[RMDB]
Background: The record gives the reactivity of an RNA of 170 nucleotides to 2A3 and DMS. Conditions: 150 mM KOAc, 10 mM MgCl2 and 150 mM bicine (pH 8.5), 24 C. DMS adducts were read by reverse transcription with MarathonRT. 2A3 adducts were read by reverse transcription with SuperScript II with manganese. The 2A3 profile rests on 2,684 reads.

RNA sequence: GGGAACGACUCGAGUAGAGUCGAAAAAUGUAGAAGUUUUUACUGAUGGUAAGCUUAAUUGUAGUUUCCAGGACGCUGCCUCUAAUAUCUUUGUUAUUAACAAGGACACUUAUGCAGCUCUUAGAAAGAACCGACUUCUUCGGAAGUCGGAAAAGAAACAACAACAACAAC
Reactivity to 2A3 in 0.01 (KOAc 150mM, MgCl2 10mM, bicine 150mM(pH8.5), 24C), signal-to-noise 3, nucleotides 027 to 129: a000u090g030u070a000g050a160a020g030u000u010u080u030u090a130c080u090g180a170u150g030g000u000a020a000g020c020u080u060a010a000u120u060g020u030a070g050u030u000u000c000c000a000g000g000a000c100g010c000u000g000c000c010u000c000u000a020a000u020a010u040c000u000u000u090g010u090u120a300u230u220a120a000c000a000a000g000g000a000c000a020c090u000u000a020u180g000c000a000g060c000u000c020u020u000a000g060a010a100a000g050a020a020
Reactivity to DMS in 0.01 (KOAc 150mM, MgCl2 10mM, bicine 150mM(pH8.5), 24C), signal-to-noise 1, nucleotides 027 to 129: a130u080g030u000a160g000a060a200g000u000u100u000u000u000a110c080u000g000a240u000g000g060u000a000a070g050c020u110u030a070a010u020u040g030u050a000g000u000u020u020c000c030a050g000g000a090c000g050c020u020g010c060c000u000c000u080a010a080u030a090u000c000u000u000u000g000u010u030a140u050u100a120a050c000a000a070g010g010a000c100a020c300u000u000a010u020g030c010a000g030c010u020c050u000u030a060g000a030a140a030g050a110a100